Source: RMDB library OK2TST, as collected in RNAgym. Chemical mapping of a 177-nucleotide RNA with 2A3 and DMS. The reactions ran in a buffer of 150 mM KOAc, 10 mM MgCl2 and 150 mM bicine (pH 8.5), at 24 C. The 2A3 profile rests on 8,911 reads.
RNA sequence: GGGAACGACUCGAGUAGAGUCGAAAACAGCCGGCGCGCUUCGUACGCUCGGCCGUCGACGGCAGUCGCGAGGAGCUGAAGAGCCUGCGUGUCUGGCUGGUCGAGUGGACGCAGUCGCUGCGUCUCAGAUGAGGCUUUUAUUCGUAAAAGCCUCAUCAAAAGAAACAACAACAACAAC
Reactivity to 2A3 in 0.01 (KOAc 150mM, MgCl2 10mM, bicine 150mM(pH8.5), 24C), signal-to-noise 5, nucleotides 027 to 126: c010a010g040c040c000g010g000c010g010c000g000c020u030u010c020g040u040a020c030g000c010u010c010g150g020c030c010g160u190c050g010a040c020g030g200c110a100g020u060c020g010c020g050a140g030g070a070g040c020u060g080a160a020g020a070g110c040c100u080g000c030g010u030g010u010c060u100g030g000c030u040g000g010u020c030g040a040g040u120g020g000a000c000g000c010a010g050u270c060g010c300u010g000c010g020u010c000u020c010a010
Reactivity to DMS in 0.01 (KOAc 150mM, MgCl2 10mM, bicine 150mM(pH8.5), 24C), signal-to-noise 6, nucleotides 027 to 126: c050a040g000c030c010g000g020c020g010c050g010c010u010u000c070g000u000a210c300g010c010u000c010g000g010c070c000g030u010c010g010a050c040g020g030c300a070g010u000c020g020c010g000a120g000g010a080g020c020u010g010a140a210g000a110g010c120c130u000g000c010g030u000g000u010c000u010g050g010c000u000g000g020u010c070g010a110g010u000g000g000a020c000g010c010a020g010u010c120g010c050u010g010c010g000u000c000u010c100a150